An RNA of 177 nucleotides, treated with DMS and 2A3 and read out base by base. DMS adducts were read by reverse transcription with MarathonRT. For DMS, 2,117 sequencing reads were counted.

[RMDB]
RNA sequence: GGGAACGACUCGAGUAGAGUCGAAAACGGACGGGAUUUUAGCCUGGUUGCAGGUUUACCCAUUUCGUGCUGGGUCCUGGACCCACUUAAGAUGAUAGAAAUAUUAUCGAUUUCUUUACCGUCCGGAGACGUGAUUUUACUUCGGUAAAAUCACGUCAAAAGAAACAACAACAACAAC
Reactivity to DMS in 0.01 (KOAc 150mM, MgCl2 10mM, bicine 150mM(pH8.5), 24C), signal-to-noise 2, nucleotides 027 to 126: c040g000g000a020c000g000g000g000a150u010u000u010u020a050g010c090c080u000g020g030u030u000g030c020a010g000g000u020u020u000a110c010c000c010a080u010u010u000c130g030u000g020c270u000g010g000g030u000c010c080u020g020g100a020c050c000c180a040c060u000u000a070a170g000a020u000g010a020u000a020g000a100a050a090u000a020u000u000a050u010c030g000a100u000u000u000c090u010u010u010a220c020c000g000u000c000c000g000g010a100
Reactivity to 2A3 in 0.01 (KOAc 150mM, MgCl2 10mM, bicine 150mM(pH8.5), 24C), signal-to-noise 1, nucleotides 027 to 126: c010g010g010a000c010g020g010g070a100u000u060u060u220a030g040c020c030u030g000g080u080u210g130c010a010g030g010u050u120u180a040c010c010c010a020u060u090u080c130g060u110g040c090u020g000g000g030u020c000c050u070g050g050a020c030c000c000a010c020u030u040a080a020g020a010u040g020a010u000a030g060a020a030a010u030a030u070u030a040u070c000g010a050u030u080u030c040u080u070u030a090c000c010g020u000c030c020g000g000a040